Background:
Structure probing data (2A3) for a 207-nucleotide construct. Values cover nucleotides 27 to 156. The RNA was probed in 150 mM KOAc, 10 mM MgCl2 and 150 mM bicine (pH 8.5) at 24 C.
RNA sequence: GGGAACGACUCGAGUAGAGUCGAAAAGUUUAUCUUGCAGCUUGUUAUCAAGCAACAGUAGCUACAUCAACCUUUAAUCCACAGCACAGUUUGCAUAUUCCAAGUUACAACACAAACAUAAUGUUUGCUCGUGACAAUGAAAUUAUGAAUCAUGCUGCGAGGUUCUACUGUUCGCAGUAGAACCUCGAAAAGAAACAACAACAACAAC
Reactivity to 2A3 in 0.01 (KOAc 150mM, MgCl2 10mM, bicine 150mM(pH8.5), 24C), signal-to-noise 1, nucleotides 027 to 156: g010u000u000u160a060u080c050u000u060g000c010a000g000c000u000u160g030u090u140a090u300c050a050a010g080c000a000a020c020a070g100u130a020g050c000u240a020c000a090u300c040a020a010c020c020u070u120u030a080a100u100c030c000a060c000a010g000c000a000c000a050g060u080u060u210g020c000a020u000a040u070u030c070c000a060a120g010u010u080a020c010a070a010c030a050c000a090a040a000c000a000u290a300a110u300g010u000u000u040g100c060u080c080g030u010g000a000c000a000a180u040g040a050a040a080u180u150a020u110g000a000a010u010c000a060u010g010c000u040g020